[RMDB]
Source: RMDB libraries RFM100 and RFMREP, as collected in RNAgym. The record gives the reactivity of an RNA of 177 nucleotides to DMS and 2A3. For 2A3 the reverse transcriptase was SuperScript II with manganese. The RNA was probed in 150 mM KOAc, 10 mM MgCl2 and 150 mM bicine (pH 8.5) at 24 C. DMS adducts were read by reverse transcription with MarathonRT.
RNA sequence: GGGAACGACUCGAGUAGAGUCGAAAAUCGGGGGAAGGUCUGAGGUCAUUUUCCGUGAGGGAGGCGCGCCAACGCGUGCAGCAGUCGCACCAGAAACCAAGAGCCUCUGUGCUUAUGCCAGGAGGAGCGGAUGUAUACAAUUCGUUGUAUACAUCCGAAAAGAAACAACAACAACAAC
Reactivity to DMS in 0.01 (KOAc 150mM, MgCl2 10mM, bicine 150mM(pH8.5), 24C), signal-to-noise 9, nucleotides 027 to 126: u010c060g000g000g000g000g010a100a050g010g010u010c040u010g010a080g010g010u020c060a070u020u010u000u010c040c060g030u030g010a120g000g000g010a060g000g010c040g010c040g010c030c060a080a080c170g000c050g010u020g000c030a070g020c040a060g010u000c060g000c050a050c030c050a100g000a080a090a100c100c080a100a120g020a130g020c020c020u020c030u010g010u030g010c010u010u020a080u030g010c010c030a080g000g000a040g010g010a070g000
Reactivity to 2A3 in 0.01 (KOAc 150mM, MgCl2 10mM, bicine 150mM(pH8.5), 24C), signal-to-noise 9, nucleotides 027 to 126: u080c010g000g010g000g000g020a050a050g050g020u040c050u060g050a040g030g050u040c080a090u050u080u070u040c030c040g040u070g060a070g020g030g010a040g020g020c010g000c010g000c030c030a080a060c080g010c010g040u040g010c010a020g010c010a010g060u080c030g000c020a030c010c020a030g100a070a050a020c030c030a080a040g040a020g110c010c010u030c030u050g070u090g040c020u170u170a090u300g020c000c010a030g010g050a010g010g010a010g050